[RMDB]
RNA sequence: GGGAACGACUCGAGUAGAGUCGAAAAUGCUCUUGGAGCCUCUGAGCCUCUGCUACCUUACUCUCAAGCUCGGGUGGAAGCCUCUGAGCCACGAGCUACACCCCAGCCGCUCACGUCUACCGCCGGCCUCCCAACGAUAAUUCGUUAUCGUUGGGAGAAAAGAAACAACAACAACAAC
Reactivity to 2A3 in 0.01 (KOAc 150mM, MgCl2 10mM, bicine 150mM(pH8.5), 24C), signal-to-noise 1, nucleotides 027 to 126: u040g000c000u000c020u060u060g160g000a040g070c000c020u050c030u020g050a010g010c000c020u030c030u030g010c010u020a040c020c000u050u070a090c050u070c010u010c110a050a010g000c020u030c050g050g000g000u020g050g000a080a040g010c030c010u000c070u080g050a010g080c000c020a080c050g020a000g010c020u000a020c020a060c050c000c000c000a010g000c010c080g040c010u040c010a080c040g030u000c030u070a110c010c040g000c000c000g030g010c030
Reactivity to DMS in 0.01 (KOAc 150mM, MgCl2 10mM, bicine 150mM(pH8.5), 24C), signal-to-noise 2, nucleotides 027 to 126: u010g000c000u000c020u000u010g000g000a140g000c110c050u010c020u000g020a080g010c050c020u010c030u020g000c040u000a050c060c020u010u010a110c050u010c050u000c070a080a080g010c020u000c200g010g000g010u010g020g020a120a100g010c110c000u010c050u000g000a140g010c010c090a040c120g010a080g000c030u000a150c080a120c040c010c000c040a080g000c060c050g010c040u000c060a080c070g020u010c020u000a090c030c020g000c030c040g000g000c120